The record gives the reactivity of an RNA of 207 nucleotides to DMS and 2A3. The DMS profile rests on 2,351 reads. The 2A3 profile rests on 1,335 reads. Values are in units of 0.01, from 0 to 300, in steps of 10. DMS adducts were read by reverse transcription with MarathonRT. The data come from the RNA Mapping Database (RMDB), library OK3TST. High 2A3 reactivity points to a flexible backbone, as in loops and unpaired stretches.
RNA sequence: GGGAACGACUCGAGUAGAGUCGAAAAACAGCUGAGAUGAGCAAUUUGCAGUUGGCAUCUUUGUCAAAGGAGCUUUAUGUAAAUGUGCACCUUAAUUUUGUCAUUUAAAAAUACAUAUAGGAGGCAGAAGCUGGGGGAUUGCCUGAGCUCAGGAGUACCUCGCAUUUAUAUUCGUAUAAAUGCGAGGAAAAGAAACAACAACAACAAC
Reactivity to DMS in 0.01 (KOAc 150mM, MgCl2 10mM, bicine 150mM(pH8.5), 24C), signal-to-noise 1, nucleotides 027 to 156: a050c040a120g010c120u000g010a070g000a040u010g000a080g010c010a110a010u000u010u000g000c060a070g000u020u000g050g070c020a050u000c030u010u010u010g030u060c150a030a080a080g010g010a160g050c010u000u000u090a050u010g020u000a030a030a090u010g010u020g030c000a040c050c030u000u010a030a060u000u000u010u010g030u020c070a170u010u000u010a020a000a080a100a180u020a120c020a040u000a170u020a130g020g000a090g000g000c000a060g020a100a040g030c060u000g010g020g010g020g000a090u000u020g000c010c070u000g000a090g020c050u000c010a110g020g000a050g010u010a130
Reactivity to 2A3 in 0.01 (KOAc 150mM, MgCl2 10mM, bicine 150mM(pH8.5), 24C), signal-to-noise 3, nucleotides 027 to 156: a000c010a000g040c020u050g020a020g000a070u090g010a040g070c010a010a070u080u070u140g010c030a060g040u060u040g020g010c010a110u050c060u110u060u110g080u130c070a080a070a070g030g000a040g010c020u080u150u200a070u080g040u030a030a050a040u090g040u080g040c050a050c010c010u070u100a130a150u120u220u130u080g020u020c010a030u080u080u300a120a110a030a070a030u130a050c020a020u150a000u040a090g030g000a010g010g030c020a010g030a100a000g010c070u060g000g010g000g020g000a040u020u080g020c010c020u010g020a010g020c010u010c010a010g010g030a020g040u040a010